[RMDB]
RNA sequence: GGGAACGACUCGAGUAGAGUCGAAAAUACCAAUGGUUCGCCAUUGGUACUUGUAUUGACGAAUACUACCGUAGAAGUAUACAGGUCUCAUAACUACGGAUAUACACUAGAGUUUCGACUCUAGUAACAACACCUGAUGAUUCGUCAUCAGGUGUUGAAAAGAAACAACAACAACAAC
Reactivity to DMS in 0.01 (KOAc 150mM, MgCl2 10mM, bicine 150mM(pH8.5), 24C), signal-to-noise 3, nucleotides 027 to 126: u000a000c000c000a020a010u000g000g010u000u000c190g010c000c010a020u000u000g010g010u000a000c020u000u000g000u000a050u000u000g010a100c150g010a120a070u010a070c040u000a100c010c010g020u000a010g000a160a070g000u000a040u000a060c030a030g000g010u000c020u000c040a110u020a110a070c010u020a010c010g000g010a260u010a110u010a070c200a050c010u000a010g000a010g010u000u000u020c130g020a030c000u000c000u020a000g010u010a060a090
Reactivity to 2A3 in 0.01 (KOAc 150mM, MgCl2 10mM, bicine 150mM(pH8.5), 24C), signal-to-noise 4, nucleotides 027 to 126: u040a010c000c000a000a010u020g000g040u030u040c230g020c070c010a000u000u000g010g010u000a030c020u040u080g040u060a070u030u160g130a060c060g100a100a030u040a110c020u040a180c010c010g010u010a000g030a150a000g060u050a030u030a080c050a030g030g050u000c010u020c030a100u130a180a060c000u030a010c000g020g010a030u060a010u030a140c050a000c020u010a000g010a000g010u000u130u090c180g080a030c000u000c000u000a000g000u010a020a010
Structure probing data (DMS and 2A3) for a 177-nucleotide construct. Conditions: 150 mM KOAc, 10 mM MgCl2 and 150 mM bicine (pH 8.5), 24 C. High DMS reactivity at an A or C suggests that its Watson-Crick edge is free. The data come from the RNA Mapping Database (RMDB), library M2PK50. The 2A3 profile rests on 4,465 reads. For DMS the reverse transcriptase was MarathonRT. For 2A3 the reverse transcriptase was SuperScript II with manganese.